[RMDB]
RNA sequence: GGGAACGACUCGAGUAGAGUCGAAAAAUUCUACCUUAUUUGAUAGUAGAUUUAAAACUUUGCAACAGAACCGUUCAUGGGUAUAGCAUGAAUUGUUUAACUGUCCUCUAGGAUUCCCGUCCUAUGGGUCACCUGCAGAGUUCGCUCUGCAGGUGACAAAAGAAACAACAACAACAAC
Reactivity to 2A3 in 0.01 (KOAc 150mM, MgCl2 10mM, bicine 150mM(pH8.5), 24C), signal-to-noise 1, nucleotides 027 to 126: a000u000u000c060u110a110c000c010u200u200a300u250u240u120g150a100u160a070g000u000a000g020a020u000u170u210a000a180a000a000c030u000u030u050g010c010a030a000c000a040g000a000a000c000c000g000u000u000c000a000u000g020g090g280u130a280u210a100g060c000a000u060g000a000a000u010u030g010u030u060u060a220a110c100u070g000u040c000c000u000c060u000a000g000g000a000u000u150c000c130c000g000u010c000c000u030a040u040g000g000

The record gives the reactivity of an RNA of 177 nucleotides to 2A3. Source: RMDB library RFM100, as collected in RNAgym.